[RMDB]
RNA sequence: GGGAACGACUCGAGUAGAGUCGAAAACGUUAUUACCCACUGCUAUGACUUCCGCGAUUUGCAGGUGGCUGCCUUCAAAGGUGAUGAUUCGAUAGUGCUUUGCAGUGAGUACCGUCAGAGCCCGGGGAUGUCAGCCUAUUUUCGAAUAGGCUGACAUAAAAGAAACAACAACAACAAC
Reactivity to DMS in 0.01 (KOAc 150mM, MgCl2 10mM, bicine 150mM(pH8.5), 24C), signal-to-noise 2, nucleotides 027 to 126: c040g000u000u020a120u010u000a120c010c040c020a070c080u010g010c020u020a070u010g000a050c060u010u000c030c040g010c060g000a130u010u000u000g020c090a070g000g030u000g030g010c140u010g000c010c030u020u000c070a050a030a040g000g020u010g000a100u000g010a100u010u010c110g030a040u010a050g000u000g010c060u010u000u000g010c050a010g030u000g000a020g020u010a040c210c060g000u010c050a120g030a140g000c000c020c020g030g000g000g020
Reactivity to 2A3 in 0.01 (KOAc 150mM, MgCl2 10mM, bicine 150mM(pH8.5), 24C), signal-to-noise 1, nucleotides 027 to 126: c010g020u050u040a190u070u210a130c000c000c000a000c000u020g000c000u050a010u110g040a060c030u070u000c030c030g060c000g160a160u040u030u040g000c000a030g000g000u050g040g050c120u190g010c010c000u100u080c050a130a070a040g100g020u070g050a300u120g000a050u130u110c000g030a020u090a070g080u100g100c000u100u170u050g060c000a010g010u040g070a020g030u010a020c050c030g000u020c030a080g000a040g140c010c000c000g030g000g000g010